[RMDB]
The record gives the reactivity of an RNA of 177 nucleotides to DMS and 2A3. DMS adducts were read by reverse transcription with MarathonRT. The reactions ran in a buffer of 150 mM KOAc, 10 mM MgCl2 and 150 mM bicine (pH 8.5), at 24 C.
RNA sequence: GGGAACGACUCGAGUAGAGUCGAAAAGUAUUUGAACUAGCACAAGCGAUUGCUAAGGUUCAAGAACAAAACUAUGAAGUGAUUCCAGAAGCUAUAGUUAAAGAUGAUUAUGUGCUGAGCUCUGCACCUUUCUAUGGGCCUUCGGGCCCAUAGAAAGAAAAGAAACAACAACAACAAC
Reactivity to DMS in 0.01 (KOAc 150mM, MgCl2 10mM, bicine 150mM(pH8.5), 24C), signal-to-noise 2, nucleotides 027 to 126: g020u010a050u030u010u000g000a040a000c040u020a000g050c080a180c160a100a070g000c290g000a150u000u050g040c040u000a180a140g000g040u010u000c030a010a020g010a080a070c080a050a030a030a050c060u020a120u010g040a030a120g010u000g000a040u000u050c100c040a010g000a100a070g020c000u000a000u000a040g010u040u000a000a080a190g090a040u000g000a050u030u040a150u030g020u000g000c040u000g000a140g000c020u000c000u030g000c080a000c170
Reactivity to 2A3 in 0.01 (KOAc 150mM, MgCl2 10mM, bicine 150mM(pH8.5), 24C), signal-to-noise 3, nucleotides 027 to 126: g180u110a150u030u060u030g000a020a010c010u000a000g000c010a010c040a300a190g270c280g220a300u060u160g000c000u020a060a160g190g000u000u020c000a000a010g050a030a050c090a020a040a000a000c010u090a060u230g050a030a020g020u030g050a040u040u040c120c040a040g000a110a000g060c040u040a050u010a010g090u040u050a060a150a120g180a120u110g010a040u020u300a050u170g030u010g000c040u040g020a000g040c010u010c020u140g000c010a050c000